[RMDB]
RNA sequence: GGGAACGACUCGAGUAGAGUCGAAAACUCUUGUUAGGUGAAAGUUGAUGGUCGCCGGGUCAGUCCAUGCCUUUGAAAACAGUUCUAUGUAGUAGGGAGUCGAGAACCUAUGAGAGUUAGAACUUGCUAUGCCUUGGACUCUUCGGAGUCCAAGGAACUAAGGGUGUAGCUUCGGCUACACCCUUAGAAAAGAAACAACAACAACAAC
Reactivity to DMS in 0.01 (KOAc 150mM, MgCl2 10mM, bicine 150mM(pH8.5), 24C), signal-to-noise 1, nucleotides 027 to 156: c050u010c010u000u010g020u000u000a050g010g020u020g020a130a060a040g050u010u010g020a110u010g010g030u000c010g020c020c010g010g000g010u020c020a050g000u010c020c030a050u000g000c010c010u010u020u000g000a080a100a020a050c020a020g000u010u000c010u000a070u020g030u010a290g010u010a050g000g000g020a120g060u000c070g050a260g010a060a130c040c000u000a040u010g010a240g010a230g000u020u000a020g020a040a090c010u010u010g050c030u000a120u010g020c000c000u000u000g010g020a080c000u000c000u000u000c270g030g000a020g010u010c020c000a000a020g000g010a010a020